[RMDB]
This 177-nucleotide RNA was probed chemically with DMS and 2A3. DMS (dimethyl sulfate) methylates the pairing face of unpaired adenines and cytosines.
RNA sequence: GGGAACGACUCGAGUAGAGUCGAAAAGGAACGUUCGUAUAGUACGAGAGGAACUACGAAUGGGUGCCACUGGUGUACCGGCUGUUCGAAAGAGCACGUGCCGGGCAGCCACGCACCACGGGGUAAGGUGUUCAACUCAGUUCGCUGAGUUGAACACAAAAGAAACAACAACAACAAC
Reactivity to DMS in 0.01 (KOAc 150mM, MgCl2 10mM, bicine 150mM(pH8.5), 24C), signal-to-noise 2, nucleotides 027 to 126: g010g000a120a070c110g010u000u000c000g020u000a000u000a030g000u000a130c010g000a210g000a290g000g000a100a110c200u000a000c020g050a010a000u030g000g000g110u000g020c000c030a060c110u010g000g000u000g000u010a290c020c030g000g010c000u010g020u030u000c000g010a090a110a200g000a030g000c050a050c280g000u020g000c010c000g020g030g010c190a260g010c010c000a000c150g000c030a030c090c030a090c020g000g000g010g000u010a100a110g000
Reactivity to 2A3 in 0.01 (KOAc 150mM, MgCl2 10mM, bicine 150mM(pH8.5), 24C), signal-to-noise 2, nucleotides 027 to 126: g040g000a070a020c010g000u000u000c000g000u000a010u000a010g000u000a020c000g000a010g020a030g090g000a010a000c000u010a000c000g000a000a000u020g010g010g040u010g000c000c010a120c060u020g020g010u040g040u180a150c000c000g000g000c000u000g000u000u000c030g080a110a070a070g060a030g000c080a060c200g150u080g000c020c000g010g000g000c000a000g030c000c000a020c130g030c000a000c000c000a010c040g050g020g000g010u080a010a100g110

It was measured as part of the RMDB libraries RFM100 and RFMREP.